[RMDB]
RNA sequence: GGGAACGACUCGAGUAGAGUCGAAAACUUUCGAGCUUCGGCUCGAAAGAAAAGCAACCAGGCACGGUGCCUGAGAACUGACUAGCUAAUACGGGAGCUAAAAAAUCUGAGCCUUCGGGCUCAGAAAUCGUCAAUACAUGUUCGCAUGUAUUGACGAAAAAGAAACAACAACAACAAC
Reactivity to 2A3 in 0.01 (KOAc 150mM, MgCl2 10mM, bicine 150mM(pH8.5), 24C), signal-to-noise 1, nucleotides 027 to 126: c020u000u000u000c010g020a010g000c020u030u200c300g140g000c010u000c000g000a000a000a000g000a020a060a000a010g010c000a050a000c020c020a010g010g010c010a000c240g240g110u190g010c000c000u120g050a100g010a080a020c110u080g080a050c070u060a020g000c020u040a130a020u150a250c040g020g030g110a040g020c010u050a120a000a000a000a000a190u010c010u000g000a020g010c000c030u030u130c300g020g030g010c000u000c000a000g000a000a000a000
Reactivity to DMS in 0.01 (KOAc 150mM, MgCl2 10mM, bicine 150mM(pH8.5), 24C), signal-to-noise 2, nucleotides 027 to 126: c020u000u000u000c000g000a030g000c010u000u020c200g010g000c000u000c020g000a010a020a010g020a000a070a130a080g000c040a050a120c070c010a020g000g010c010a240c290g010g030u020g030c010c010u000g010a080g000a130a070c040u000g010a080c070u000a040g000c030u000a070a080u020a100c150g000g010g010a060g010c060u030a020a010a070a100a070a050u010c010u000g000a010g040c000c000u000u020c280g010g010g030c000u000c000a000g010a010a020a050